[RMDB]
RNA sequence: GGGAACGACUCGAGUAGAGUCGAAAAUGACAAAUGUACGGGAAUAUGAUUGUGUAUCUUAACGUAUAAGGGCCGCAGGCCCGUCAAGUUGAAUGAACGGUCCAGAUUAAUUCCUUAGCGACGAAGAUAUUCUGAUUCGAUUCGUCGAAUCAGAAUAAAAAGAAACAACAACAACAAC
Reactivity to 2A3 in 0.01 (KOAc 150mM, MgCl2 10mM, bicine 150mM(pH8.5), 24C), signal-to-noise 6, nucleotides 027 to 126: u210g040a030c070a050a090a040u190g010u080a030c030g030g050g050a090a050u120a100u140g160a180u110u140g120u040g050u210a050u040c010u060u060a070a020c020g020u090a030u020a220a070g020g000g020c020c000g140c190a060g050g020c000c030c000g000u000c020a030a060g020u040u080g090a070a090u090g010a040a030c070g030g010u000c010c020a020g000a060u050u160a050a080u040u070c000c000u010u050a030g020c010g080a030c070g030a050a040g030a080
Reactivity to DMS in 0.01 (KOAc 150mM, MgCl2 10mM, bicine 150mM(pH8.5), 24C), signal-to-noise 6, nucleotides 027 to 126: u020g000a140c110a070a090a070u040g000u000a030c050g000g000g000a070a060u010a060u010g010a080u010u020g010u030g010u010a030u010c030u000u010a080a080c030g000u010a080u010a080a120g000g000g020c030c040g030c160a070g010g010c020c000c000g000u010c070a040a130g010u010u000g000a050a060u030g000a080a060c050g000g000u000c020c040a100g000a130u020u050a060a100u010u020c010c010u000u000a110g000c080g010a040c100g000a080a080g000a160